An RNA of 177 nucleotides, treated with DMS and read out base by base.
Values cover nucleotides 27 to 126.
DMS adducts were read by reverse transcription with MarathonRT.
The DMS profile rests on 758 reads.
[RMDB]
RNA sequence: GGGAACGACUCGAGUAGAGUCGAAAAAAAAAGAAGAUAGCGAAAGCUAGAAAAGAUCCGUGGCUAAACAGGAAACUGAAGAGAGCUGCUCGGCUGAGAAGCCGUGCCACCGAAGCAGCUCAAAAAACUGAAUAGAAAGAUUCGUCUUUCUAUUCAGAAAAGAAACAACAACAACAAC
Reactivity to DMS in 0.01 (KOAc 150mM, MgCl2 10mM, bicine 150mM(pH8.5), 24C), signal-to-noise 1, nucleotides 027 to 126: a010a020a030a030a020g000a060a070g000a220u010a000g050c010g000a150a040a090g000c000u000a060g010a100a080a080a110g000a030u000c080c070g020u000g000g010c020u000a040a120a210c030a020g000g000a080a090a060c030u000g000a060a080g000a120g000a020g000c000u000g030c000u000c020g000g010c040u000g000a170g010a050a040g010c040c050g010u010g000c040c030a030c020c010g010a040a090g000c000a000g000c020u000c000a000a050a010a030a050a050